[RMDB]
RNA sequence: GGGAACGACUCGAGUAGAGUCGAAAAGAUAUGGAUCCCGGAGGGAGUCGAUAUUCGGAAACGAAUAUACGACGAGGAUCUCCUGGGAUCCUAAGUCAAAACUCUAGUAAGUUCGCUUACUAGAGAACAUAAGGAACAACUUCGGUUGUUCCUUAUGAAAAGAAACAACAACAACAAC
Reactivity to 2A3 in 0.01 (KOAc 150mM, MgCl2 10mM, bicine 150mM(pH8.5), 24C), signal-to-noise 2, nucleotides 027 to 126: g000a000u000a010u050g000g000a010u010c030c020c020g020g000a010g020g020g030a050g000u000c000g000a010u000a010u000u000c000g000g000a030a000a000c010g020a000a000u030a000u080a300c030g000a000c020g010a010g000g020a010u000c010u000c000c020u070g010g000g000a010u020c000c000u000a000a000g000u010c010a030a040a060a210c000u010c000u000a000g000u000a000a000g010u020u190c300g010c210u010u000a000c010u000a000g000a010g000a020a000
Reactivity to DMS in 0.01 (KOAc 150mM, MgCl2 10mM, bicine 150mM(pH8.5), 24C), signal-to-noise 4, nucleotides 027 to 126: g000a020u000a030u020g000g000a010u000c010c000c000g010g000a030g020g000g000a020g020u000c000g010a060u000a010u000u000c000g010g010a010a010a030c000g010a020a000u000a010u010a110c020g020a020c000g030a100g010g010a040u000c000u000c010c010u010g020g000g000a000u000c000c000u000a000a070g000u000c000a120a110a120a210c010u000c000u000a000g000u000a010a010g000u000u020c300g020c000u000u000a010c000u000a010g000a010g000a070a150